[RMDB]
RNA sequence: GGGAACGACUCGAGUAGAGUCGAAAAUCAUAUGUUCCUCCUAUUUAAAACCUGCAUUAGUGCUCUUAAACUAGUGUUAUUGUGGGCCGGUACUAUUACUUUGAACAAAUAAGAGUGCUUAAAGCAGACAUCUCUGUGCAUUCGUGCACAGAGAUGUAAAAGAAACAACAACAACAAC
Reactivity to 2A3 in 0.01 (KOAc 150mM, MgCl2 10mM, bicine 150mM(pH8.5), 24C), signal-to-noise 3, nucleotides 027 to 126: u100c020a010u080a030u210g050u010u010c030c020u120c000c040u210a240u080u220u270a060a040a020a020c010c000u000g050c000a050u020u230a000g000u000g000c000u000c010u030u020a100a060a060c070u040a060g070u010g030u110u050a040u010u100g030u020g000g060g020c000c000g030g010u060a050c060u060a080u180u020a010c040u130u080u160g140a170a020c040a060a100a000u030a030a030g000a000g000u030g000c010u070u110a100a000a000g050c000a000g020
Reactivity to DMS in 0.01 (KOAc 150mM, MgCl2 10mM, bicine 150mM(pH8.5), 24C), signal-to-noise 1, nucleotides 027 to 126: u150c210a030u040a010u000g020u010u000c010c000u000c060c010u000a150u090u000u040a080a050a170a080c300c070u000g000c020a050u000u000a020g000u000g000c000u000c000u000u000a080a160a090c270u010a050g000u030g000u000u000a050u000u000g020u030g000g000g030c070c000g000g000u000a040c150u000a130u020u050a020c030u000u060u050g040a030a080c180a170a150a100u000a060a000g040a000g030u000g000c000u000u000a020a000a160g000c000a070g000

Chemical mapping of a 177-nucleotide RNA with 2A3 and DMS. For DMS, 1,321 sequencing reads were counted. The reactions ran in a buffer of 150 mM KOAc, 10 mM MgCl2 and 150 mM bicine (pH 8.5), at 24 C. DMS adducts were read by reverse transcription with MarathonRT. It was measured as part of the RMDB library RFM100.